[RMDB]
RNA sequence: GGGAACGACUCGAGUAGAGUCGAAAACAGCUCUGUCAUCUCCUCAUUAGCAUUUUAAAGACCAGUAAGUCUCCUCCAUCUUACAAAUGAAACCAAACCAAGCCAACACAAGGUAGAACAUCCUCUUCAAUCCACACUGCCUUCCAGGCUGCACCUAGCCAGGGAUAAUGUUCGCAUUAUCCCUGGCAAAAGAAACAACAACAACAAC
Reactivity to 2A3 in 0.01 (KOAc 150mM, MgCl2 10mM, bicine 150mM(pH8.5), 24C), signal-to-noise 1, nucleotides 027 to 156: c000a040g010c010u100c010u030g040u000c020a040u000c000u010c010c000u070c060a130u000u150a050g020c030a020u040u090u020u150a130a100a000g030a090c010c020a000g020u090a030a050g030u110c030u010c010c010u000c010c020a000u030c020u070u050a040c040a030a130a090u050g030a030a030a000c010c000a020a020a020c010c000a040a000g010c000c010a080a010c060a060c000a070a010g060g020u060a010g000a120a000c040a150u140c000c040u030c010u100u070c200a100a100u060c100c080a040c000a000c000u070g000c010c020u120u120c000c000a020g000g000c010u020g000c040a060c000c000u000a070
Chemical mapping of a 207-nucleotide RNA with 2A3. Values cover nucleotides 27 to 156. The 2A3 profile rests on 523 reads.